This 177-nucleotide RNA was probed chemically with 2A3 and DMS. As a SHAPE reagent, 2A3 marks flexible, mostly unpaired nucleotides at the ribose 2'-OH.
[RMDB]
RNA sequence: GGGAACGACUCGAGUAGAGUCGAAAAGAUAUGGAACAGGAGGCACUAUAAGAUCGGAAACGAUCUUACGAAUGAACUACCUCCAUGUUCCUAAGUCAAAAUCCUAUGGUGUUCGCACCAUAGGAAACGUACCCUUUAUGUUCGCAUAAAGGGUACGAAAAGAAACAACAACAACAAC
Reactivity to 2A3 in 0.01 (KOAc 150mM, MgCl2 10mM, bicine 150mM(pH8.5), 24C), signal-to-noise 4, nucleotides 027 to 126: g000a000u000a000u050g000g000a000a000c000a010g010g010a010g030g020c170a020c290u040a030u000a060a000g000a000u000c010g000g020a020a010a010c010g000a000u000c000u010u000a010c030g200a090a200u300g050a100a120c130u070a040c130c000u000c000c000a030u020g000u000u000c000c000u000a010a000g000u000c010a020a010a010a300u030c000c000u010a010u000g010g010u020g020u050u100c300g040c110a010c010c000a010u000a000g010g000a030a010a000
Reactivity to DMS in 0.01 (KOAc 150mM, MgCl2 10mM, bicine 150mM(pH8.5), 24C), signal-to-noise 4, nucleotides 027 to 126: g010a010u000a040u010g010g000a000a010c000a040g000g000a020g000g020c050a060c150u000a300u000a000a010g000a010u010c000g000g000a020a010a040c020g000a010u000c000u000u000a000c090g010a110a070u020g010a180a120c210u000a060c000c000u000c000c000a070u000g020u000u010c000c000u000a000a090g000u000c020a080a090a090a120u000c000c000u010a000u000g010g010u010g010u000u000c220g010c010a010c000c000a000u000a000g000g010a000a010a050